The record gives the reactivity of an RNA of 177 nucleotides to 2A3. For 2A3, 1,054 sequencing reads were counted. Reactivities are given for positions 27 through 126. Reactivities are rounded to 0.1 and cut off at 0 and 3.

RNA sequence: GGGAACGACUCGAGUAGAGUCGAAAAGAGCUGUAGUACAGCAAGAAGCACGCGAUCCUUGGCACCGCGUGCAAGAUAAUUAUGCCGGCAAAGAAGGAAAGCCGGCAUAAGUGCCAAGUAAGAGAGAGCCUCGGUAUACUUUCGAGUAUACCGAGGCAAAAGAAACAACAACAACAAC
Reactivity to 2A3 in 0.01 (KOAc 150mM, MgCl2 10mM, bicine 150mM(pH8.5), 24C), signal-to-noise 2, nucleotides 027 to 126: g060a030g000c020u020g000u140a120g000u070a060c070a040g000c010a010a000g220a020a000g000c000a000c000g000c000g030a040u090c000c000u010u000g010g000c000a000c010c010g000c000g000u000g000c000a000a000g030a010u300a150a070u140u060a000u000g000c000c010g000g000c020a020a160a240g180a000a110g150g080a100a140a020g020c000c000g000g000c000a000u000a000a000g000u000g000c010c030a000a000g010u070a090a020g070a000g000a000g000a000